[RMDB]
RNA sequence: GGGAACGACUCGAGUAGAGUCGAAAACUUAUCCCGGGGGGAUUGCCUCGGCCCCCUCCCUAACACGGGAGUCUCGGGCCCCCUCCCAGGAAUGGAGACGGGGGGAAAUCGACCGGGUCCCGCAGAACCAGUCCCUUCUUCGGAAGGGACAAAAGAAACAACAACAACAAC
Reactivity to DMS in 0.01 (KOAc 150mM, MgCl2 10mM, bicine 150mM(pH8.5), 24C), signal-to-noise 3, nucleotides 027 to 129: c110u000u000a070u050c000c000c000g030g030g020g020g020g030a100u060u040g020c050c010u020c050g000g000c030c010c000c030c000u000c040c000c020u030a140a090c150a130c150g000g000g090a030g040u000c000u020c050g000g050g000c040c000c060c000c000u000c050c000c000a040g020g100a100a080u040g000g090a070g030a000c140g080g000g000g010g010g010a070a100a180u070c200g070a000c040c070g040g000g020u030c020c000c000g020c150a030g030a100a120c100c100a110
Reactivity to 2A3 in 0.01 (KOAc 150mM, MgCl2 10mM, bicine 150mM(pH8.5), 24C), signal-to-noise 5, nucleotides 027 to 129: c030u160u120a050u150c010c010c020g000g000g000g000g010g020a180u110u290g070c000c000u020c040g020g000c000c000c000c000c000u010c000c000c010u060a070a020c050a020c080g000g010g010a070g120u020c050u010c010g050g000g000c010c000c010c000c000u010c000c000c000a020g000g120a120a090u070g000g010a100g010a150c150g010g000g010g000g010g020a010a090a140u170c050g030a070c010c000g000g000g030u010c010c000c000g030c050a040g030a040a010c010c000a010
Structure probing data (DMS and 2A3) for a 170-nucleotide construct.
The reactions ran in a buffer of 150 mM KOAc, 10 mM MgCl2 and 150 mM bicine (pH 8.5), at 24 C.